The record gives the reactivity of an RNA of 177 nucleotides to DMS and 2A3. Reactivities are given for positions 27 through 126. For DMS, 1,096 sequencing reads were counted. For 2A3 the reverse transcriptase was SuperScript II with manganese. It was measured as part of the RMDB library M2PK50. The RNA was probed in 150 mM KOAc, 10 mM MgCl2 and 150 mM bicine (pH 8.5) at 24 C.
[RMDB]
RNA sequence: GGGAACGACUCGAGUAGAGUCGAAAAGCCCCACGCUUCGGCGUGGGGCAAAUAAAAUCAGCGGUUAGCUGGCGUAAAAUAUUACCGCUGAACGCCAGCUUAAAACACCCUUGUUCGCAAGGGUGAACUCUUAGAAGCAGUUCGCUGCUUCUAAGAGAAAAGAAACAACAACAACAAC
Reactivity to DMS in 0.01 (KOAc 150mM, MgCl2 10mM, bicine 150mM(pH8.5), 24C), signal-to-noise 1, nucleotides 027 to 126: g030c010c000c060c010a010c000g050c000u000u010c120g020g020c010g070u000g000g050g000g000c010a000a000a000u000a060a030a130a100u010c030a070g040c010g000g010u010u010a010g020c000u000g000g020c000g010u000a040a110a090a160u000a030u020u000a230c010c030g030c010u000g030a140a010c000g000c020c000a010g010c010u000u000a050a070a150a170c000a010c010c000c000u000u000g010u000u000c300g010c010a010a020g000g010g030u000g000a020a030
Reactivity to 2A3 in 0.01 (KOAc 150mM, MgCl2 10mM, bicine 150mM(pH8.5), 24C), signal-to-noise 2, nucleotides 027 to 126: g010c020c010c070c020a000c030g050c040u090u090c270g120g030c030g000u000g020g050g030g000c020a000a000a000u010a000a000a020a040u080c040a010g060c030g070g070u210u170a010g010c000u000g020g020c000g010u080a150a270a210a070u230a070u160u210a050c010c000g020c020u070g140a010a010c000g030c010c000a030g040c020u020u100a000a060a050a040c020a000c000c000c000u000u000g020u060u050c210g000c110a000a010g000g010g000u010g000a010a020